Notes: Chemical mapping of a 177-nucleotide RNA with DMS and 2A3.
[RMDB]
RNA sequence: GGGAACGACUCGAGUAGAGUCGAAAAGAAACCCAUACUUUUCACUUUCGAACGGGUGAGUGUACUAUCACUUUGGAAGACGUCUAUAUGUUACUCGGCUUACCUUUUGGAGGUUCAAUUGUUACGGAUGUGGAUGGAUUUUCGAAUCCAUCCACAUAAAAGAAACAACAACAACAAC
Reactivity to DMS in 0.01 (KOAc 150mM, MgCl2 10mM, bicine 150mM(pH8.5), 24C), signal-to-noise 2, nucleotides 027 to 126: g000a100a160a180c040c020c000a200u040a050c110u000u030u010u020c080a100c060u010u000u000c030g030a060a070c210g000g010g010u010g000a010g040u000g030u010a070c160u030a090u000c100a040c060u000u010u000g010g000a070a040g000a040c070g020u010c040u010a080u010a110u040g020u010u000a080c020u000c050g020g010c020u000u010a020c030c010u000u010u000u000g010g010a030g020g000u000u030c050a040a050u010u010g010u000u010a140c120g000g010
Reactivity to 2A3 in 0.01 (KOAc 150mM, MgCl2 10mM, bicine 150mM(pH8.5), 24C), signal-to-noise 3, nucleotides 027 to 126: g080a040a060a060c000c000c020a030u190a080c050u050u090u040u100c080a010c000u080u080u020c000g030a040a000c060g000g090g000u020g010a030g000u100g010u040a110c010u060a040u140c050a030c020u140u050u100g060g040a040a000g060a010c030g020u000c040u070a120u010a050u140g060u040u040a100c030u020c020g000g010c040u010u000a080c000c000u020u010u050u080g030g020a010g000g000u000u070c040a040a150u000u080g030u100u020a040c090g110g000
It was measured as part of the RMDB libraries RFM100 and RFMREP. The reactions ran in a buffer of 150 mM KOAc, 10 mM MgCl2 and 150 mM bicine (pH 8.5), at 24 C.